[RMDB]
RNA sequence: GGGAACGACUCGAGUAGAGUCGAAAACUCCGGCAUCGAUCUGGUGCGCGACGAGCGCGGCGACUUCCGGGUGCUCGAGGACAACCUGCGCUCGCCCUCGGGGGUCUCCUAUGUGAUGGAGAACCGACAGCCCUAGUCGGUUCGCCGACUAGGGCUGAAAAGAAACAACAACAACAAC
Reactivity to DMS in 0.01 (KOAc 150mM, MgCl2 10mM, bicine 150mM(pH8.5), 24C), signal-to-noise 2, nucleotides 027 to 126: c020u000c000c020g010g000c030a020u000c030g000a080u020c190u020g000g000u000g000c020g020c050g020a070c040g000a060g020c010g030c020g010g000c050g030a300c300u000u000c060c020g020g020g010u020g010c060u000c080g010a060g010g030a070c130a110a140c300c010u000g030c000g000c000u010c020g000c020c010c070u000c070g010g010g010g030g000u000c010u000c000c020u000a100u020g000u000g000a090u000g000g010a020g000a030a080c020c010g000a210
Reactivity to 2A3 in 0.01 (KOAc 150mM, MgCl2 10mM, bicine 150mM(pH8.5), 24C), signal-to-noise 1, nucleotides 027 to 126: c010u020c020c040g040g050c020a040u030c020g260a150u110c140u300g000g040u020g020c180g000c040g040a050c020g000a030g000c010g020c030g000g000c050g040a070c050u090u010c020c020g060g010g150u220g050c060u090c150g060a200g000g040a040c050a080a070c060c020u020g060c000g000c000u020c020g000c000c000c000u010c030g000g000g020g000g070u010c000u000c000c020u050a090u240g270u090g060a140u160g000g000a010g000a050a010c000c020g000a080

Structure probing data (DMS and 2A3) for a 177-nucleotide construct. For DMS, 1,249 sequencing reads were counted. The 2A3 profile rests on 1,016 reads. DMS adducts were read by reverse transcription with MarathonRT. The data come from the RNA Mapping Database (RMDB), library OK2TRN.